Structure probing data (2A3) for a 177-nucleotide construct.
The reactions ran in a buffer of 150 mM KOAc, 10 mM MgCl2 and 150 mM bicine (pH 8.5), at 24 C.
RNA sequence: GGGAACGACUCGAGUAGAGUCGAAAAUGCAGCACUGACCAGAAUGAUGGCAACAACUGACACCAUGGGGAAUUAUGCAACCAAGAACUUCGAUUUCAUGUUCCAGGCUUGUCUUCUUUACAGUCAGUCUGCCAGCCUCUUUCGAGAGGCUGGCAGAAAAAGAAACAACAACAACAAC
Reactivity to 2A3 in 0.01 (KOAc 150mM, MgCl2 10mM, bicine 150mM(pH8.5), 24C), signal-to-noise 1, nucleotides 027 to 126: u160g040c060a000g000c110a000c000u010g080a000c000c000a000g150a140a130u090g080a000u000g000g000c000a020a100c050a000a080c000u010g000a010c000a000c050c000a000u000g000g020g000g000a000a000u070u130a000u300g260c020a000a050c000c000a130a000g140a120a060c060u220u130c040g290a270u100u150u180c000a000u110g000u000u100c000c000a000g010g000c040u000u050g010u020c000u000u000c000u020u140u130a170c000a060g090u000c000a140g050